[RMDB]
RNA sequence: GGGAACGACUCGAGUAGAGUCGAAAACCGUAGGUAGUAACGGAUUCAUCGAUCUUGCAGAACGCGUUGAGUUCGAAAGAGCUCAACUAAGCUGCAAGGGAGAAUCCGCCCUACCUAAACGGAAAGUCUGAAUGAUUGUUCGCAAUCAUUCAGACAAGGACCAUGUUCUGUUCGCAGAACAUGGUCCAAAAGAAACAACAACAACAAC
Reactivity to 2A3 in 0.01 (KOAc 150mM, MgCl2 10mM, bicine 150mM(pH8.5), 24C), signal-to-noise 1, nucleotides 027 to 156: c000c000g040u000a000g000g010u000a000g000u020a130a030c010g010g020a010u000u010c010a140u300c260g070a050u030c010u000u010g000c010a010g010a200a060c070g060c000g100u000u000g010a000g020u000u000c000g000a010a010a010g020a000g000c020u000c010a000a000c000u000a040a070g020c010u000g000c010a000a000g010g000g010a030g000a000a010u000c000c000g020c010c000c000u000a000c000c000u010a070a190a000c010g030g010a080a100a030g020u000c020u020g010a010a000u000g030a000u000u030g050u140u090c300g000c110a000a000u010c000a000u000u000c000a000g000a000c000a000a000